Notes
The record gives the reactivity of an RNA of 177 nucleotides to 2A3 and DMS. The RNA was probed in 150 mM KOAc, 10 mM MgCl2 and 150 mM bicine (pH 8.5) at 24 C. For 2A3 the reverse transcriptase was SuperScript II with manganese. It was measured as part of the RMDB libraries RFM100 and RFMREP.
RNA sequence: GGGAACGACUCGAGUAGAGUCGAAAAAUACGAAAGCUUCCUAUUCACUGCACCAUUCUUUAAUCAAUGAGUGACUGGAGGGGAAAAGGAAAGCGAGAAAGAAACAUCGAAUAACGUCCUCAUACUAGAAGUUACGUGUAUUCGUACACGUAACUUCAAAAGAAACAACAACAACAAC
Reactivity to 2A3 in 0.01 (KOAc 150mM, MgCl2 10mM, bicine 150mM(pH8.5), 24C), signal-to-noise 5, nucleotides 027 to 126: a000u220a020c030g040a040a030a010g000c020u000u000c000c010u010a060u000u030c010a000c020u040g050c040a010c020c000a050u050u030c030u080u140u220a200a140u120c140a090a120u130g010a000g070u020g030a020c020u040g020g060a040g030g040g000g020a040a020a000a040g030g000a100a060a040g050c020g020a040g140a020a100a030g090a030a080a010c050a070u180c070g020a040a060u180a150a040c030g060u020c000c020u090c040a060u150a210c050u050a080
Reactivity to DMS in 0.01 (KOAc 150mM, MgCl2 10mM, bicine 150mM(pH8.5), 24C), signal-to-noise 3, nucleotides 027 to 126: a090u020a070c080g000a040a110a100g000c040u000u000c000c020u000a120u010u000c000a040c040u020g000c030a050c060c030a000u010u000c000u010u050u030a130a090u070c300a060a110u010g020a010g020u000g000a060c150u020g020g030a040g010g020g000g010a000a080a160a050g040g000a030a020a030g000c000g000a120g020a020a050a090g010a160a050a070c180a060u010c050g000a070a050u030a160a100c090g000u000c020c010u000c090a070u000a100c160u030a070
2A3 is a SHAPE reagent: it acylates the 2'-hydroxyl of flexible nucleotides of all four kinds.
Values cover nucleotides 27 to 126.